Chemical mapping of a 177-nucleotide RNA with DMS and 2A3. For 2A3, 2,863 sequencing reads were counted. The RNA was probed in 150 mM KOAc, 10 mM MgCl2 and 150 mM bicine (pH 8.5) at 24 C.
[RMDB]
RNA sequence: GGGAACGACUCGAGUAGAGUCGAAAAAGUGGUCUUAGGUAGGGUAGGGCAAUACGCGAACACGAUUCCACCUGUGCUUCGCAGGCGACAAAAUUCUCAAACCUCUUCUCCUGUUCUAGAACUGUCCAUUAGCAUCCUACUUCGGUAGGAUGCUAAUAAAAGAAACAACAACAACAAC
Reactivity to DMS in 0.01 (KOAc 150mM, MgCl2 10mM, bicine 150mM(pH8.5), 24C), signal-to-noise 3, nucleotides 027 to 126: a040g020u020g020g020u010c080u010u010a020g010g020u020a040g000g020g010u030a110g010g000g000c060a090a020u020a050c110g020c030g000a040a030c050a020c040g000a170u040u040c030c050a070c110c010u060g020u010g000c190u000u000c010g020c030a110g010g000c040g030a050c080a050a050a070a080u010u010c010u000c060a130a050a100c080c020u010c010u010u000c030u010c000c010u020g000u000u000c030u020a060g000a030a060c070u020g010u050c020c020
Reactivity to 2A3 in 0.01 (KOAc 150mM, MgCl2 10mM, bicine 150mM(pH8.5), 24C), signal-to-noise 4, nucleotides 027 to 126: a000g090u110g020g000u040c040u080u100a040g020g040u060a020g020g030g060u050a050g040g010g000c010a050a080u150a130c060g010c010g030a010a000c040a000c020g100a100u110u040c030c000a050c020c030u050g000u020g010c160u040u020c020g000c020a010g000g030c000g020a040c040a010a080a030a040u070u010c040u000c000a110a120a070c010c000u030c000u020u050c020u000c000c010u040g020u080u040c020u050a050g000a090a050c010u080g060u030c030c000